Chemical mapping of a 207-nucleotide RNA with 2A3 and DMS.
[RMDB]
RNA sequence: GGGAACGACUCGAGUAGAGUCGAAAAGCCCAGAAGCCUCCCCUCAAAAUCGUUUCAGUCCAAAAUUGAUUCGGCGGCCCUGUCAUGAGGCCGAAACGAAGGCACGUACCCCUUCGAAUGGCGUCCGAACUUUCAGUCGUAUUCGUACGACUGAAAACUAACCUAAGAUGUUCGCAUCUUAGGUUAGAAAAGAAACAACAACAACAAC
Reactivity to 2A3 in 0.01 (KOAc 150mM, MgCl2 10mM, bicine 150mM(pH8.5), 24C), signal-to-noise 2, nucleotides 027 to 156: g020c030c000c030a030g200a120a050g050c010c010u000c010c010c040c010u060c020a030a070a020a030u110c010g010u010u040u030c050a070g000u040c060c050a060a120a120a150u050u090g010a090u100u000c030g000g010c000g000g000c020c000c000u060g020u070c020a020u070g050a050g030g000c000c000g000a010a000a000c020g000a010a020g020g000c040a020c090g110u140a100c030c000c010c030u020u010c010g000a030a040u030g010g000c000g020u000c030c040g050a060a060c050u000u030u000c000a000g000u000c010g000u010a020u050u040c110g030u030a000c000g000a000c010u010g000a000a000a000a000
Reactivity to DMS in 0.01 (KOAc 150mM, MgCl2 10mM, bicine 150mM(pH8.5), 24C), signal-to-noise 2, nucleotides 027 to 156: g010c010c000c010a170g010a110a200g010c020c000u000c020c020c000c010u000c040a120a060a150a100u000c040g020u000u000u010c030a040g000u000c040c110a080a090a140a180u000u010g000a040u000u000c010g040g030c050g030g050c020c020c020u000g040u010c100a110u030g000a060g020g020c000c010g010a010a040a060c010g000a050a050g010g040c060a080c090g030u000a150c020c030c010c010u000u000c020g030a100a050u000g010g020c020g010u000c000c040g000a080a110c100u000u010u000c000a010g000u000c000g030u000a050u000u000c270g040u000a000c000g000a020c000u000g010a000a010a040a270
For DMS the reverse transcriptase was MarathonRT. Conditions: 150 mM KOAc, 10 mM MgCl2 and 150 mM bicine (pH 8.5), 24 C. 2A3 adducts were read by reverse transcription with SuperScript II with manganese.